[RMDB]
RNA sequence: GGGAACGACUCGAGUAGAGUCGAAAAACUAAAAAUAUUUCCGAAUCAAAAUCGCUGCGAUUACUCAACUUAUCACAUUGUAAAUGGGUAACUGAUAUAUCAGUAUUAUCUUCCCUAUCGACACUGGCCCUAAUGGGAAAUUCGUUUCCCAUUAGGGAAAAGAAACAACAACAACAAC
Reactivity to 2A3 in 0.01 (KOAc 150mM, MgCl2 10mM, bicine 150mM(pH8.5), 24C), signal-to-noise 7, nucleotides 027 to 126: a000c090u180a080a010a030a040a040u150a170u070u050u040c030c030g070a060a100u130c100a080a100a070a060u130c040g000c070u070g030c010g060a050u030u050a050c030u010c020a060a070c040u050u100a050u130c030a040c040a240u100u130g110u250a080a090a070u060g010g020g020u030a030a040c020u040g030a000u030a040u050a030u200c030a010g050u020a120u080u060a050u070c050u020u030c020c020c000u030a070u120c020g020a020c050a040c150u080g130g010
Reactivity to DMS in 0.01 (KOAc 150mM, MgCl2 10mM, bicine 150mM(pH8.5), 24C), signal-to-noise 2, nucleotides 027 to 126: a060c100u040a000a050a080a070a050u030a080u000u000u000c020c030g000a130a130u100c220a050a080a090a070u030c060g010c010u020g000c040g000a080u050u000a090c000u050c020a010a050c100u000u000a100u000c060a090c080a060u010u050g000u030a000a030a100u000g000g010g000u000a040a000c040u040g000a020u010a090u030a070u020c000a060g040u010a120u000u000a070u020c040u010u000c010c060c000u000a070u000c140g000a070c110a030c060u010g000g020